[RMDB]
Chemical mapping of a 177-nucleotide RNA with 2A3 and DMS. For 2A3, 972 sequencing reads were counted. For DMS the reverse transcriptase was MarathonRT. The data come from the RNA Mapping Database (RMDB), library RFMREP. For DMS, 614 sequencing reads were counted. Conditions: 150 mM KOAc, 10 mM MgCl2 and 150 mM bicine (pH 8.5), 24 C.
RNA sequence: GGGAACGACUCGAGUAGAGUCGAAAAUAGUUAGAUUCAAGCAGGAGGAAGUAUACAAAUGUUUGAACCCUCUUUUACUAAAAUCCUGAUACUUCGGGUGUGUGGAUGUGCAAAUCCAUACUAUAUUAAUCUUAUUACGGUUCGCCGUAAUAAGAUUAAAAGAAACAACAACAACAAC
Reactivity to 2A3 in 0.01 (KOAc 150mM, MgCl2 10mM, bicine 150mM(pH8.5), 24C), signal-to-noise 1, nucleotides 027 to 126: u150a000g110u070u040a020g050a300u040u030c010a040a010g000c010a010g010g000a000g000g000a000a010g000u000a000u010a060c030a000a000a010u010g000u020u010u010g040a050a040c030c030c000u070c090u110u290u060u100a220c110u130a070a010a010a020u060c000c000u010g000a000u000a010c000u030u010c000g000g000g010u000g000u000g000u010g000g000a000u000g060u110g130c020a170a080a000u020c020c000a000u000a000c020u040a050u000a020u170u040
Reactivity to DMS in 0.01 (KOAc 150mM, MgCl2 10mM, bicine 150mM(pH8.5), 24C), signal-to-noise 1, nucleotides 027 to 126: u000a060g020u000u020a060g010a160u000u000c000a020a030g010c000a000g000g020a300g010g020a030a020g010u000a020u020a020c030a020a300a140u000g000u000u000u000g010a030a040c010c020c050u020c140u000u010u000u000a100c210u010a020a000a010a090u020c000c000u000g000a020u000a040c020u000u000c000g000g030g030u010g000u000g050u040g020g020a030u050g020u000g040c300a050a100a020u000c000c000a030u000a020c010u040a090u000a070u010u000